[RMDB]
RNA sequence: GGGAACGACUCGAGUAGAGUCGAAAAGAUAUGGAUAGGUGUGAAUAAUGCGAAUAGCGAUAAGCUAUUGGUCGGAAACGACCAUUAGCUUUUGACGCUAAACAUUAUUCACACCUAUCCUAAGUCAGUUAUAAUUACGGUUCGCCGUAAUUAUAACAAAAGAAACAACAACAACAAC
Reactivity to DMS in 0.01 (KOAc 150mM, MgCl2 10mM, bicine 150mM(pH8.5), 24C), signal-to-noise 6, nucleotides 027 to 126: g010a060u000a300u010g000g000a000u000a010g010g010u000g010u000g010a010a010u000a000a010u000g010c070g020a170a210u010a020g020c000g010a170u000a010a010g010c000u000a000u000u000g000g010u000c000g010g010a110a100a220c010g010a010c000c000a010u000u000a000g010c000u000u000u000u010g000a210c100g010c010u000a030a170a080c000a000u000u000a000u000u000c000a000c000a010c010c000u000a000u000c000c000u000a010a080g010u000c050a160